[RMDB]
RNA sequence: GGGAACGACUCGAGUAGAGUCGAAAACGAGCCCGGCAGGCCUUCGGGCUUGCUCAGGGGUUCGCUCCUGAGAUUAUCAUCCAACCUCCAAGGAUGGUAAUCCGGCGUCGAUUGUAAGGUCUAAACAAUUGACGCACCACUACUACAGUCCCAACGACAUGUAAAACAUGUUCGCAUGUUUUACAUGAAAAGAAACAACAACAACAAC
Reactivity to DMS in 0.01 (KOAc 150mM, MgCl2 10mM, bicine 150mM(pH8.5), 24C), signal-to-noise 4, nucleotides 027 to 156: c030g000a030g000c000c000c010g000g000c020a020g010g020c010c010u000u000c300g030g020g000c000u000u000g000c020u000c050a090g060g030g020g070u000u000c030g010c010u000c030c010u000g010a080g020a020u010u000a010u000c000a030u000c010c020a110a160c060c060u020c300c040a120a300g000g010a010u000g020g010u000a000a000u000c010c030g000g000c000g000u000c000g020a030u010u000g010u000a070a050g010g000u000c060u010a120a220a040c010a020a030u000u000g010a010c000g030c010a040c090c070a070c050u000a100c070u010a090c050a080g010u000c000c040c010a050a160c070g010a280
Reactivity to 2A3 in 0.01 (KOAc 150mM, MgCl2 10mM, bicine 150mM(pH8.5), 24C), signal-to-noise 9, nucleotides 027 to 156: c010g000a000g000c000c000c000g010g010c000a010g000g010c010c000u110u240c270g090g000g000c000u000u000g000c000u010c020a040g020g050g000g000u000u000c010g000c030u060c010c020u140g050a170g000a110u000u000a000u000c000a000u000c010c010a040a130c070c100u160c070c080a160a040g000g000a000u000g000g000u000a000a000u000c000c020g030g000c000g000u000c000g000a000u000u010g020u050a120a150g130g080u070c140u180a130a130a000c000a000a000u000u010g000a000c000g000c000a060c010c040a060c020u190a030c010u060a050c020a050g070u050c010c010c020a060a050c040g070a030